[RMDB]
RNA sequence: GGGAACGACUCGAGUAGAGUCGAAAAAUGGGUUGGAUAGCUCUCCAACGGUGUUUUUUCAGUCACCAGCUGCGCAGUGCCGAGAGCAAUGCCACCGAGUUGUACCGCGCGUUCUGCAAAGGUAUCCAACAGGUCGUUCAUUCGUGAACGACCUGUUAAAAGAAACAACAACAACAAC
Reactivity to DMS in 0.01 (KOAc 150mM, MgCl2 10mM, bicine 150mM(pH8.5), 24C), signal-to-noise 2, nucleotides 027 to 126: a110u010g020g030g010u010u010g030g010a050u000a300g000c030u000c010u000c000c100a150a080c030g030g040u000g020u000u010u040u000u000u010c030a100g040u000c050a080c230c200a160g020c020u000g040c110g040c050a130g000u000g000c190c150g010a040g020a070g000c040a040a110u010g020c030c010a040c010c010g010a070g010u030u040g000u010a060c000c020g040c300g000c010g010u000u040c060u030g020c030a020a200a140g010g000u000a030u000c070c070